RNA sequence: GGGAACGACUCGAGUAGAGUCGAAAAAGACGGACUUCUGGAGAGACCUAUAAGUAGCAACAUCUUUGUAUUGACACCAAGAUGUGCUCUAGGCGCCGAAGGGGCAAGAAGAGUAAAACAACUCCUCCACAACAUAGAUGUUCGCAUCUAUGUUGUGAAAAGAAACAACAACAACAAC
Reactivity to 2A3 in 0.01 (KOAc 150mM, MgCl2 10mM, bicine 150mM(pH8.5), 24C), signal-to-noise 4, nucleotides 027 to 126: a000g080a010c030g010g060a020c010u020u010c030u180g030g000a240g020a020g050a200c010c010u070a070u030a220a050g190u150a010g010c020a020a160c000a040u020c010u050u020u020g030u040a170u070u300g140a070c050a010c150c000a000a000g000a020u010g010u000g000c000u000c000u010a000g010g000c010g000c030c000g000a040a010g030g000g010g000c020a040a000g010a040a020g020a020g010u100a030a150a030a050c030a020a030c010u000c000c000u000c010
Reactivity to DMS in 0.01 (KOAc 150mM, MgCl2 10mM, bicine 150mM(pH8.5), 24C), signal-to-noise 4, nucleotides 027 to 126: a090g010a150c100g000g000a120c020u000u010c020u030g020g020a130g020a130g010a140c020c020u000a060u010a190a070g000u010a010g020c020a050a040c000a000u000c010u010u000u000g020u010a290u030u010g010a150c220a020c070c040a020a030g010a010u000g000u000g010c000u010c030u000a030g000g000c050g000c060c010g010a050a040g020g000g000g010c070a070a100g000a040a070g000a040g000u000a010a070a040a120c130a070a070c050u010c030c010u000c100